This 207-nucleotide RNA was probed chemically with DMS and 2A3. Reactivities are given for positions 27 through 156. Source: RMDB library OK3TST, as collected in RNAgym. For 2A3 the reverse transcriptase was SuperScript II with manganese. The 2A3 profile rests on 2,764 reads. Reactivities are rounded to 0.1 and cut off at 0 and 3.
[RMDB]
RNA sequence: GGGAACGACUCGAGUAGAGUCGAAAACAAAGUUCUUGUCAAGCCAAUUACGUGGUAUACCAUUCUUUUCACAAUACGCAACUGCUUCAUUCAAACAACUACGUUCUAUUCUACGUAUCAAUGCUACUGCACGUUCUUCAUCCAAUGUAUUAAAGUCGCCUCCUAUAGUUUUCGAACUAUAGGAGGCAAAAGAAACAACAACAACAAC
Reactivity to DMS in 0.01 (KOAc 150mM, MgCl2 10mM, bicine 150mM(pH8.5), 24C), signal-to-noise 2, nucleotides 027 to 156: c030a050a130a130g020u000u000c060u000u000g040u000c020a100a100g000c050c030a100a140u010u000a080c070g000u010g030g010u000a080u000a110c090c030a110u000u000c080u020u000u010u000c060a080c070a070a110u020a020c060g000c040a030a080c100u000g000c040u010u000c030a130u000u000c070a050a100a040c060a060a070c030u000a010c030g000u000u000c010u000a090u000u010c020u000a050c000g000u020a050u000c040a080a100u000g000c000u010a030c050u000g000c050a100c040g000u000u000c010u000u000c020a100u000c020c050a060a150u000g030u000a100u010u010a030a020a050g000u000c100
Reactivity to 2A3 in 0.01 (KOAc 150mM, MgCl2 10mM, bicine 150mM(pH8.5), 24C), signal-to-noise 6, nucleotides 027 to 156: c020a010a140a020g030u050u040c020u100u070g090u070c050a060a060g020c010c020a040a110u120u040a070c070g010u030g020g020u060a050u040a130c030c010a080u080u060c050u090u090u080u080c070a060c030a100a100u110a090c080g040c050a060a070c040u050g030c010u080u060c030a120u070u040c050a020a110a120c030a060a030c080u070a030c040g030u030u040c030u070a090u080u020c020u030a020c010g030u020a020u100c030a070a100u080g030c020u030a040c040u030g010c010a020c060g030u050u030c020u070u090c030a050u060c030c020a070a060u220g040u060a130u160u180a120a040a110g140u230c080